[RMDB]
RNA sequence: GGGAACGACUCGAGUAGAGUCGAAAACUGCAUCUGUGGAGGACGAAGCAUAUUUCUGUUUCUGGAGGAUUAUUUAUAAUCUGCCGGAAAGUCUUGCAGGUGGCUGGGAUAUGUUGAGUCUGGUAGAAAAAUCAGGAGUCCUUCGGGACUCCUGAAACAUCUUAACAAUGUUCGCAUUGUUAAGAUGAAAAGAAACAACAACAACAAC
Reactivity to 2A3 in 0.01 (KOAc 150mM, MgCl2 10mM, bicine 150mM(pH8.5), 24C), signal-to-noise 2, nucleotides 027 to 156: c050u090g030c020a130u100c100u130g090u100g150g120a120g030g000a000c000g020a000a020g000c030a030u020a020u080u100u070c110u160g140u040u010u000c000u000g000g010a060g000g020a000u000u030a030u020u200u030a060u030a030a030u010c010u070g040c040c010g000g000a000a030a010g000u010c020u040u060g010c020a030g010g080u030g030g040c030u080g020g010g000a030u010a000u040g060u060u000g010a010g000u000c040u030g010g010u080a080g100a030a130a000a000a020u000c010a010g030g000a010g000u000c040c020u060u120c160g030g000g000a010c000u000c000c000u000g000a000a000a000
Reactivity to DMS in 0.01 (KOAc 150mM, MgCl2 10mM, bicine 150mM(pH8.5), 24C), signal-to-noise 2, nucleotides 027 to 156: c020u010g020c040a100u000c040u010g020u000g000g020a240g010g060a030c020g000a150a100g000c020a050u000a040u000u000u010c030u010g000u000u000u010c000u000g010g000a030g010g010a010u000u000a020u010u000u000a080u000a090a030u000c000u000g000c000c000g020g000a010a070a040g010u000c000u000u000g020c040a060g050g050u010g020g000c010u020g010g010g000a050u010a020u000g010u000u000g000a280g010u000c030u010g000g000u000a110g000a030a080a110a100a160u000c000a020g000g010a050g030u000c020c010u000u010c300g060g000g030a010c000u000c000c000u000g000a020a030a130

The record gives the reactivity of an RNA of 207 nucleotides to 2A3 and DMS. The data come from the RNA Mapping Database (RMDB), library M2RFPK. DMS adducts were read by reverse transcription with MarathonRT. 2A3 adducts were read by reverse transcription with SuperScript II with manganese. The RNA was probed in 150 mM KOAc, 10 mM MgCl2 and 150 mM bicine (pH 8.5) at 24 C. DMS (dimethyl sulfate) methylates the pairing face of unpaired adenines and cytosines. Values cover nucleotides 27 to 156. The 2A3 profile rests on 903 reads.